This 177-nucleotide RNA was probed chemically with DMS. Source: RMDB library OK2TST, as collected in RNAgym. For DMS, 1,005 sequencing reads were counted. Conditions: 150 mM KOAc, 10 mM MgCl2 and 150 mM bicine (pH 8.5), 24 C.
RNA sequence: GGGAACGACUCGAGUAGAGUCGAAAAUGUUUGGUAUUGCGUGGGAAAGCUUGCACGCUGUGGCUUUGGGUGAAACUUAUACGCAAAGCGAGCAGGAUGUCAAAAGUCGCUCAAUUGCUGUAAGUGAAAUGUCUGCACCUUUCGAGGUGCAGACAUUAAAAGAAACAACAACAACAAC
Reactivity to DMS in 0.01 (KOAc 150mM, MgCl2 10mM, bicine 150mM(pH8.5), 24C), signal-to-noise 1, nucleotides 027 to 126: u010g000u000u010u000g000g000u000a050u000u000g000c030g050u010g010g000g000a050a100a130g000c120u010u000g000c110a070c090g000c040u000g010u000g000g010c060u000u000u000g040g040g000u070g030a220a090a050c050u000u000a000u000a010c300g000c010a020a010a030g030c260g000a030g020c030a070g010g010a050u000g000u000c300a070a110a100a150g030u000c010g010c010u000c020a060a300u000u000g000c000u000g020u000a010a020g000u000g010a080